[RMDB]
RNA sequence: GGGAACGACUCGAGUAGAGUCGAAAACAUAGCGUCUCACAAUGUGCGCCAUUAACAUUGUUUAUGCAAGCACGUUUCGCAAUGUACGGCGCAGAAACAUUGCCAACACAAAUACGCUUCACGAUGUAAAACAUCGGUGCGUUCGCGCACCGAUGAAUCAGAUUAGUCAGUUCGCUGACUAAUCUGAAAAAGAAACAACAACAACAAC
Reactivity to DMS in 0.01 (KOAc 150mM, MgCl2 10mM, bicine 150mM(pH8.5), 24C), signal-to-noise 2, nucleotides 027 to 156: c020a070u000a040g020c020g010u000c060u010c100a060c110a060a090u000g010u020g020c020g010c000c010a160u000u010a140a100c050a040u000u010g020u010u000u010a040u030g030c090a110a110g070c080a120c110g040u000u000u000c150g010c030a050a020u000g060u000a070c100g000g010c020g030c020a060g010a120a080a130c000a020u010u000g020c010c010a080a080c040a110c090a090a070a100u000a080c030g020c020u000u000c050a140c040g010a140u000g010u000a040a070a100a210c000a000u070c000g010g050u000g030c000g030u000u000c300g010c050g000c000a000c000c000g030a000u000g000a070a110
Reactivity to 2A3 in 0.01 (KOAc 150mM, MgCl2 10mM, bicine 150mM(pH8.5), 24C), signal-to-noise 6, nucleotides 027 to 156: c040a050u160a010g010c000g030u010c020u010c060a020c010a020a000u000g010u010g030c000g000c010c040a100u180u220a070a010c010a020u030u040g080u070u130u180a120u160g050c060a070a090g090c070a050c160g040u010u120u120c030g020c020a020a000u010g000u020a020c050g000g000c000g020c020a000g020a010a080a000c010a010u000u030g040c070c050a120a040c050a050c010a100a130a070u140a060c030g020c010u080u120c080a060c130g070a080u120g070u300a030a050a070a060c010a010u000c000g000g000u000g000c000g020u030u040c140g020c000g010c040a000c000c010g000a000u010g000a000a010